[RMDB]
RNA sequence: GGGAACGACUCGAGUAGAGUCGAAAAGUGGUCCGAACUGGGCGAUGUUCUCGAAAGACUUCGAGGGCAUCGGCUAAGGGAGAGGACAGGGAAUUUAGGGCCAUUGUCUUUCCUUCUCCGAAGGAAGCAAUUGGAAGUACUUCGGUACUUCCAAUUGAAAAGAAACAACAACAACAAC
Reactivity to 2A3 in 0.01 (KOAc 150mM, MgCl2 10mM, bicine 150mM(pH8.5), 24C), signal-to-noise 3, nucleotides 027 to 126: g050u030g000g000u000c000c010g020a050a000c060u040g020g040g060c000g010a010u010g000u020u000c000u010c000g040a050a090a060g290a140c160u020u010c020g000a000g010g010g000c000a010u000c000g010g000c010u040a050a080g020g010g020a090g020a040g020g060a090c090a070g050g020g000a100a130u150u200u160a140g000g000g000c000c000a020u030u130g100u050c010u050u070u050c000c000u010u010c160u000c050c170g020a010a000g000g010a000a020g050
Reactivity to DMS in 0.01 (KOAc 150mM, MgCl2 10mM, bicine 150mM(pH8.5), 24C), signal-to-noise 5, nucleotides 027 to 126: g030u000g010g020u000c010c010g010a140a170c300u010g000g000g010c000g010a000u000g000u000u000c000u010c010g010a010a030a150g010a180c200u010u000c000g010a020g000g000g000c000a000u000c000g000g010c010u000a050a130g000g000g000a120g000a170g000g000a160c100a120g000g000g010a080a080u010u010u000a110g010g010g000c030c050a060u010u000g010u010c040u000u010u000c010c000u000u000c010u010c150c130g000a030a020g000g000a030a050g000